[RMDB]
RNA sequence: GGGAACGACUCGAGUAGAGUCGAAAAUAGAGGAACUGAUUUUGAUUGUCUACUUCAAAUUUUUAGUUUUAUCUUUAUUCAAGUUACUUAUGCAUACAAUUUGAAUAUUCAAAUGAUUCUGUAAGUCCUUCCACCGGGUAUUCGUACCCGGUGGAAGAAAAGAAACAACAACAACAAC
Reactivity to 2A3 in 0.01 (KOAc 150mM, MgCl2 10mM, bicine 150mM(pH8.5), 24C), signal-to-noise 1, nucleotides 027 to 126: u200a000g020a020g000g000a030a010c000u000g000a020u000u070u000u000g020a020u060u040g130u170c130u230a180c000u070u000c020a020a100a060u080u040u080u150u170a020g080u040u020u010u010a300u040c000u000u070u000a050u020u050c000a010a010g010u060u000a010c030u030u020a050u210g170c020a100u100a170c010a300a000u000u000u000g050a070a040u090a080u220u130c080a000a020a140u050g000a020u110u090c000u040g030u040a050a050g050u000c000

Annotation: The record gives the reactivity of an RNA of 177 nucleotides to 2A3. The 2A3 profile rests on 407 reads. 2A3 adducts were read by reverse transcription with SuperScript II with manganese. The RNA was probed in 150 mM KOAc, 10 mM MgCl2 and 150 mM bicine (pH 8.5) at 24 C.